The data come from the RNA Mapping Database (RMDB), library OK1LIB. This 177-nucleotide RNA was probed chemically with DMS and 2A3. Reactivities are rounded to 0.1 and cut off at 0 and 3. The DMS profile rests on 14,625 reads. 2A3 adducts were read by reverse transcription with SuperScript II with manganese. As a SHAPE reagent, 2A3 marks flexible, mostly unpaired nucleotides at the ribose 2'-OH. Reactivities are given for positions 27 through 126.
RNA sequence: GGGAACGACUCGAGUAGAGUCGAAAAGUUGAUAUUAUCACCAAAUUUAGCAUACAGGAUCGCCUUCAGAGCAUCAAGACGGGAAUCAAUGUCUCUUUGCUUGUCCUCUAAAGUCUCUAUUUUGUUAAAAUACGAUUAUCUUCGGAUAAUCGUAUUUAAAAGAAACAACAACAACAAC
Reactivity to DMS in 0.01 (KOAc 150mM, MgCl2 10mM, bicine 150mM(pH8.5), 24C), signal-to-noise 6, nucleotides 027 to 126: g000u000u010g000a080u010a070u010u030a080u010c050a110c030c040a050a100a100u020u020u010a070g020c050a060u010a090c140a090g000g000a050u010c100g020c050c010u020u020c070a080g010a070g010c080a040u010c030a040a050g010a090c100g020g000g000a070a060u010c170a060a090u020g000u000c010u000c020u010u010u010g010c040u000u000g010u020c080c000u000c040u010a070a040a060g010u000c020u010c030u010a070u000u000u020u010g000u000u020a020
Reactivity to 2A3 in 0.01 (KOAc 150mM, MgCl2 10mM, bicine 150mM(pH8.5), 24C), signal-to-noise 8, nucleotides 027 to 126: g070u060u080g060a070u060a100u260u140a110u130c040a060c060c020a040a100a080u130u170u090a110g040c050a040u090a110c050a040g040g040a080u050c070g040c030c000u030u090c040a040g010a010g060c020a040u080c050a040a050g070a070c050g030g010g040a020a040u100c080a060a080u160g070u020c010u010c000u090u090u040g020c000u050u060g030u020c010c000u020c020u100a120a090a080g030u030c020u010c020u100a160u070u150u030u040g060u030u040a070